RNA sequence: GGGAACGACUCGAGUAGAGUCGAAAAAAGGUCGUCUCCAACGCUUCUUGCACCACCAACUGCCUUGCUCCCCUUGCCAAGGUGAUCAACGACAAGUUCGGAAUCGUGGAAGGCCUGAUGACCACAGGGGUGAACAAAAGUUCGCUUUUGUUCACCCAAAAGAAACAACAACAACAAC
Reactivity to DMS in 0.01 (KOAc 150mM, MgCl2 10mM, bicine 150mM(pH8.5), 24C), signal-to-noise 1, nucleotides 027 to 126: a140a020g000g000u000c030g000u000c090u000c030c060a190a050c070g040c030u010u010c020u000u000g020c110a030c010c060a020c010c070a120a050c110u000g060c020c000u000u000g000c050u000c020c040c030c010u010u000g040c210c100a070a030g010g020u000g010a020u020c070a010a060c040g000a080c070a140a090g000u000u010c050g040g000a050a000u000c090g000u000g020g000a090a130g000g000c030c040u030g000a100u020g000a090c000c070a060c190a090g000

Chemical mapping of a 177-nucleotide RNA with DMS.
The data come from the RNA Mapping Database (RMDB), library OK2TRN.
The DMS profile rests on 724 reads.